[RMDB]
RNA sequence: GGGAACGACUCGAGUAGAGUCGAAAAACAUAGGUUGGGCCAUAGGCGCUGCGGUUCAUCAUCUUGCCCUCGCCAGGACCGCUCCCGUUCUACUACAUGGCGUCGCGGAUACCGGGUUGGAAAACAAACCAUACUACAACUUCGGUUGUAGUAUGGUAAAAGAAACAACAACAACAAC
Reactivity to 2A3 in 0.01 (KOAc 150mM, MgCl2 10mM, bicine 150mM(pH8.5), 24C), signal-to-noise 2, nucleotides 027 to 126: a000c050a080u200a020g120g000u050u070g070g000g040c010c000a060u040a130g080g000c020g000c100u020g010c020g030g040u020u040c030a080u030c000a000u020c110u080u100g030c030c000c000u020c010g000c030c000a030g030g010a050c010c000g030c020u040c020c010c000g050u110u040c030u110a230c010u010a040c000a090u120g040g020c030g010u020c010g000c010g010g040a040u080a130c000c000g000g000g040u030u140g060g060a070a100a020a020c060a000a090
Reactivity to DMS in 0.01 (KOAc 150mM, MgCl2 10mM, bicine 150mM(pH8.5), 24C), signal-to-noise 4, nucleotides 027 to 126: a100c090a080u010a060g020g000u000u000g000g000g000c020c030a070u000a100g010g010c050g010c100u000g010c050g010g010u000u000c070a070u010c110a080u010c050u010u010g010c040c010c010u000c060g010c050c030a060g000g000a040c020c010g010c030u000c030c020c020g010u000u010c070u010a110c110u010a110c140a080u000g000g000c040g020u010c080g010c030g010g000a120u000a040c050c030g010g020g010u010u000g000g010a050a030a070a100c190a070a100